[RMDB]
RNA sequence: GGGAACGACUCGAGUAGAGUCGAAAACUUGUCCCCACCGUGGUGCCGAGGGGGGCAAGCCGCAGUAACAGCGGUCCGUAAGGGCCGGAAAACUGAAAAAUAAAGUGUCGGGUAGGGUUUGGUAGGCCAGUCCCCAAUAUUUCGAUAUUGGGGACUGAAAAGAAACAACAACAACAAC
Reactivity to DMS in 0.01 (KOAc 150mM, MgCl2 10mM, bicine 150mM(pH8.5), 24C), signal-to-noise 4, nucleotides 027 to 126: c010u010u000g000u010c000c010c000c010a060c060c040g000u020g000g020u020g010c060c020g010a210g010g010g010g010g000g000c010a000a010g000c050c050g010c020a000g000u010a020a170c300a030g000c000g000g010u000c000c000g000u020a120a140g010g010g000c000c000g000g000a010a020a020a020c000u010g000a010a080a060a120a110u030a090a100a100g020u000g000u000c020g000g000g010u010a050g000g010g000u000u010u010g010g000u010a050g000g000c140
Reactivity to 2A3 in 0.01 (KOAc 150mM, MgCl2 10mM, bicine 150mM(pH8.5), 24C), signal-to-noise 3, nucleotides 027 to 126: c010u010u050g020u040c000c040c000c000a080c020c020g080u100g040g110u050g080c050c000g030a110g000g000g000g020g010g000c000a010a010g010c000c020g030c000a020g020u050a090a050c030a040g030c000g000g000u000c010c000g010u070a070a230g000g000g000c000c000g000g010a050a020a020a010c020u020g150a110a000a000a010a040u270a040a080a040g070u090g010u060c040g010g010g040u060a060g020g000g010u060u090u070g030g000u050a050g000g020c000